[RMDB]
RNA sequence: GGGAACGACUCGAGUAGAGUCGAAAAGAUAUGGAGAUAUACCAGCAUCGAUCUACGGUCGGAAACGACCGUAGGGAGCUGAGUAUCAUCUCCUAAGUCAAAACAUUAGGUCUUCGGACCUAAUGAACAUGUUGAUGAACUUCGGUUCAUCAACAUGAAAAGAAACAACAACAACAAC
Reactivity to 2A3 in 0.01 (KOAc 150mM, MgCl2 10mM, bicine 150mM(pH8.5), 24C), signal-to-noise 2, nucleotides 027 to 126: g020a010u010a020u050g000g000a020g000a020u010a030u020a050c010c000a000g030c010a040u300c040g010a010u060c000u010a000c010g000g010u030c000g030g000a010a020a010c020g010a000c000c000g020u000a010g020g000g020a000g020c000u020g030a020g070u010a010u120c090a030u000c000u030c010c000u000a020a000g000u040c020a030a020a130a190c010a000u000u000a000g000g000u010c020u080u130c300g130g010a000c020c000u010a000a000u000g000a030a020
Reactivity to DMS in 0.01 (KOAc 150mM, MgCl2 10mM, bicine 150mM(pH8.5), 24C), signal-to-noise 2, nucleotides 027 to 126: g000a030u000a130u020g000g000a040g020a030u000a050u000a030c020c000a030g040c000a300u000c200g000a050u000c010u000a000c000g000g000u000c000g000g010a060a020a090c010g030a010c000c000g010u010a000g010g000g000a000g030c000u000g010a110g040u000a030u000c300a020u000c000u000c000c000u020a000a060g010u000c010a180a090a210a180c020a010u000u000a010g010g010u000c010u000u030c250g010g000a000c010c000u000a000a000u000g000a090a210